[RMDB]
RNA sequence: GGGAACGACUCGAGUAGAGUCGAAAAAGAGCCGGAUACGUCCGGCUCAACGGGGGAUACGUGUCGUGCCGUCCGCUCCCCCUAUGGCAUAACAAAUGCACCACACACUAGGCUACGGCCUAGUGAAAAAAUCCCUACAUGUUCGCAUGUAGGGAAAGUUACAUACGUCCUUCGGGACGUAUGUAACAAAAGAAACAACAACAACAAC
Reactivity to 2A3 in 0.01 (KOAc 150mM, MgCl2 10mM, bicine 150mM(pH8.5), 24C), signal-to-noise 2, nucleotides 027 to 156: a000g000a000g000c000c000g000g000a010u000a050c150g110u000c000c010g000g040c000u000c000a000a000c000g010g000g000g000g000a010u060a160c030g050u110g060u210c060g040u070g140c130c050g010u000c010c010g020c030u060c010c000c000c000c010u050a120u120g110g010c030a090u080a200a000c050a080a150a040u030g020c030a020c060c000a010c000a010c000a000c020u000a000g010g000c020u010a060c230g080g000c000c000u020a000g050u010g000a010a000a000a000a000a010u010c020c000c000u000a000c000a000u010g000u040u030c110g000c100a000u010g000u000a000g010g010g000a010a010a010